[RMDB]
RNA sequence: GGGAACGACUCGAGUAGAGUCGAAAAGAUAUGGAGAAUAUCGCCUCACUCGGAGGUUUGUAGUCCCUAUCGGAAACGAUAGAAGGACGUAGAGAAACUCCGAGUGAGGCGAUAUUCUCCUAAGUCACAUUGUUCGAUAGUUCGCUAUCGAACAAUGAAAAGAAACAACAACAACAAC
Reactivity to DMS in 0.01 (KOAc 150mM, MgCl2 10mM, bicine 150mM(pH8.5), 24C), signal-to-noise 2, nucleotides 027 to 126: g000a050u010a300u000g000g000a030g010a000a040u000a010u000c000g030c010c000u000c000a020c020u010c010g000g010a030g020g020u000u010u010g000u000a300g020u000c000c000c000u010a000u000c000g000g020a140a130a290c000g010a010u000a000g000a200a070g000g000a030c010g000u000a160g010a300g000a070a020a040c000u000c000c000g000a020g040u000g000a000g000g030c000g000a000u000a000u000u000c010u000c000c000u000a000a060g000u000c030a250
This 177-nucleotide RNA was probed chemically with DMS. The data come from the RNA Mapping Database (RMDB), library TTRINS. The reactions ran in a buffer of 150 mM KOAc, 10 mM MgCl2 and 150 mM bicine (pH 8.5), at 24 C. Reactivities are given for positions 27 through 126.